[RMDB]
RNA sequence: GGGAACGACUCGAGUAGAGUCGAAAAUAUCAUGUACUUCUGUAGUGGAGUAGAAUUGUUCAGAGAAUGAAUUAUUCCAGCUCCUGUCUUUGUGUCUUGGAAUAACUCUCUUUGAUGGAUAGAAAACUGUUAAAAUAAAAUGUGCUAGUUCAUGUCCCAUCAUAUGAGCAUUCGUGCUCAUAUGAUGAAAAGAAACAACAACAACAAC
Reactivity to DMS in 0.01 (KOAc 150mM, MgCl2 10mM, bicine 150mM(pH8.5), 24C), signal-to-noise 2, nucleotides 027 to 156: u000a060u020c090a120u000g000u000a050c030u000u000c020u020g020u010a120g040u020g030g010a060g060u010a080g010a080a120u010u000g020u000u000c010a050g020a150g010a100a090u000g010a050a030u010u000a030u010u000c020c010a040g010c040u000c020c100u000g010u010c120u010u020u010g020u030g030u000c010u000u000g000g030a040a050u000a050a040c010u000c020u010c030u000u000u000g010a100u000g000g000a100u010a080g010a080a080a060a170c100u010g010u000u000a050a060a080a160u000a070a090a070a130u010g010u000g020c020u000a090g000u010u020c020a110u000g020u000c030c020
Reactivity to 2A3 in 0.01 (KOAc 150mM, MgCl2 10mM, bicine 150mM(pH8.5), 24C), signal-to-noise 4, nucleotides 027 to 156: u160a030u060c040a030u090g050u070a030c020u060u050c030u100g200u170a150g050u120g090g020a020g030u070a030g070a170a120u120u090g020u060u020c010a010g020a010g030a100a080u110g030a050a060u070u000a000u000u000c000c000a010g030c050u040c000c050u100g170u110c080u170u260u140g050u030g020u060c060u100u180g010g010a020a000u020a030a020c010u010c000u010c000u050u020u040g030a050u060g040g020a020u020a080g090a070a120a030a050c020u040g050u190u130a070a050a090a110u200a050a090a060a070u160g030u030g040c040u040a020g050u030u040c030a030u110g020u020c000c010